[RMDB]
RNA sequence: GGGAACGACUCGAGUAGAGUCGAAAAGAUAUGGAACCUCGAACUACAGAAGCAGCUCAAUGAUGCACAGUUACUCGGAAACGAGUAACUGUGUUGAGAGCUGCAAUUCUGCGAGGUUCCUAAGUCACUAUACCCCACUCUUCGGAGUGGGGUAUAGAAAAGAAACAACAACAACAAC
Reactivity to DMS in 0.01 (KOAc 150mM, MgCl2 10mM, bicine 150mM(pH8.5), 24C), signal-to-noise 1, nucleotides 027 to 126: g000a010u000a080u030g000g000a000a010c010c000u000c000g010a100a070c090u020a300c000a000g000a050a120g030c000a010g000c000u000c010a020a040u000g010a050u010g000c000a010c000a000g010u000u000a010c010u000c010g010g000a000a010a030c000g000a030g010u000a000a010c000u000g000u010g010u010u010g000a300g000a000g000c000u000g010c000a010a020u010u000c000u000g000c020g000a010g010g010u000u000c000c000u010a000a080g000u000c010a270
The record gives the reactivity of an RNA of 177 nucleotides to DMS.
The RNA was probed in 150 mM KOAc, 10 mM MgCl2 and 150 mM bicine (pH 8.5) at 24 C.
The data come from the RNA Mapping Database (RMDB), library TTRINS.
For DMS the reverse transcriptase was MarathonRT.